This 207-nucleotide RNA was probed chemically with 2A3. It was measured as part of the RMDB library OK3TST. The RNA was probed in 150 mM KOAc, 10 mM MgCl2 and 150 mM bicine (pH 8.5) at 24 C. For 2A3 the reverse transcriptase was SuperScript II with manganese.

RNA sequence: GGGAACGACUCGAGUAGAGUCGAAAACGAUCUGUUCGCAGAUCGAGCUACGGAGACGUAGCAGAGCACGACAGAGCUCUGGGUCGUGCGAUACCGGAAAUAAGACCAUCUGCACGAGUGCUAGCAGAUGGCAGAGCUCAAAGAAACAGCACUCGAAGCAUUUAGUCGUAUUCGUACGACUAAAUGCAAAAGAAACAACAACAACAAC
Reactivity to 2A3 in 0.01 (KOAc 150mM, MgCl2 10mM, bicine 150mM(pH8.5), 24C), signal-to-noise 4, nucleotides 027 to 156: c010g000a000u000c010u010g040u100u110c250g020c090a000g000a000u000c000g000a030g000c000u010a000c010g060g020a090g030a070c020g000u000a020g010c000a000g070a000g000c010a000c000g000a000c010a020g060a000g050c000u000c030u060g110g010g010u000c000g000u000g000c010g010a050u080a120c010c030g050g120a040a070a050u200a080a040g060a060c010c000a010u000c000u000g010c010a020c130g010a010g000u000g000c000u010a020g000c010a000g000a000u000g000g000c010a010g010a000g000c010u020c080a120a180a020g180a030a130a030c060a020g010c010a010c010u010c010g020a060a010